[RMDB]
The data come from the RNA Mapping Database (RMDB), library OK2TST. The record gives the reactivity of an RNA of 177 nucleotides to 2A3 and DMS. For DMS, 1,317 sequencing reads were counted. The reactions ran in a buffer of 150 mM KOAc, 10 mM MgCl2 and 150 mM bicine (pH 8.5), at 24 C. The 2A3 profile rests on 1,168 reads. For 2A3 the reverse transcriptase was SuperScript II with manganese.
RNA sequence: GGGAACGACUCGAGUAGAGUCGAAAACGGGAAUCUCUUUUGGACACAUUUACUUGGUCCAAUGGCGAUUUGCCACUUGCAGAUUCAAUUUGGAUGGCACCGAUAAAUCCAGGAGUAGUCAAACGCGAGCCUACGAAACAUUCGUGUUUCGUAGGCUAAAAGAAACAACAACAACAAC
Reactivity to 2A3 in 0.01 (KOAc 150mM, MgCl2 10mM, bicine 150mM(pH8.5), 24C), signal-to-noise 1, nucleotides 027 to 126: c050g000g000g000a010a020u000c000u020c010u090u020u010u000g060g010a050c130a030c040a300u000u130u180a170c240u050u050g000g000u000c000c000a000a000u020g030g000c000g010a020u060u010u100g170c020c000a030c030u080u090g010c060a010g010a140u010u090c080a070a110u060u070u070g060g000a020u020g040g000c060a040c060c040g000a010u090a130a140a010u000c010c020a020g050g000a080g040u080a010g000u020c040a070a030a070c110g000c030g080
Reactivity to DMS in 0.01 (KOAc 150mM, MgCl2 10mM, bicine 150mM(pH8.5), 24C), signal-to-noise 2, nucleotides 027 to 126: c120g000g000g000a010a010u000c000u000c010u010u010u000u000g000g020a020c010a120c050a070u010u010u040a150c240u000u000g000g010u010c000c000a010a010u000g000g020c070g010a050u000u000u000g040c020c020a110c150u020u000g010c060a090g000a070u000u000c060a110a120u010u000u000g030g010a070u000g010g010c040a160c070c060g010a080u000a050a070a050u010c030c020a060g000g030a090g040u000a050g020u010c040a060a050a050c170g030c100g000